[RMDB]
RNA sequence: GGGAACGACUCGAGUAGAGUCGAAAAGAUAUGGACGAAAGGCAACAGCCGUCUGUCGGAAACGACAGGACGGACAUGCCUUGUCCUAAGUCAAAGCCAAUAUGACGGUUCGCCGUCAUAUUGGCAAGUUUAGGGAGAAGUUCGCUUCUCCCUAAACAAAAGAAACAACAACAACAAC
Reactivity to 2A3 in 0.01 (KOAc 150mM, MgCl2 10mM, bicine 150mM(pH8.5), 24C), signal-to-noise 5, nucleotides 027 to 126: g020a020u070a040u140g000g000a010c060g220a300a050a040g010g000c020a060a040c040a300g080c000c000g010u000c000u000g000u000c000g020g020a060a050a020c000g000a010c020a020g230g100a020c010g010g010a020c010a050u030g000c000c000u000u040g000u020c000c000u000a110a020g030u030c070a110a070a040g000c010c000a000a010u000a000u010g000a000c010g010g060u060u090c300g070c110c000g000u000c000a000u010a000u000u000g000g000c000a000a000
Reactivity to DMS in 0.01 (KOAc 150mM, MgCl2 10mM, bicine 150mM(pH8.5), 24C), signal-to-noise 5, nucleotides 027 to 126: g000a030u010a300u010g000g010a010c020g020a100a050a020g010g000c000a030a080c270a170g000c000c000g010u010c000u010g000u000c000g000g000a100a070a130c000g000a010c000a020g020g010a000c000g000g000a030c100a190u000g000c000c000u000u000g010u000c000c000u000a040a090g010u000c030a120a090a170g000c000c000a000a000u000a010u000g000a010c000g010g000u000u010c260g020c010c000g000u000c000a000u010a000u000u000g000g000c010a000a000
Chemical mapping of a 177-nucleotide RNA with 2A3 and DMS. The RNA was probed in 150 mM KOAc, 10 mM MgCl2 and 150 mM bicine (pH 8.5) at 24 C. For DMS, 7,370 sequencing reads were counted.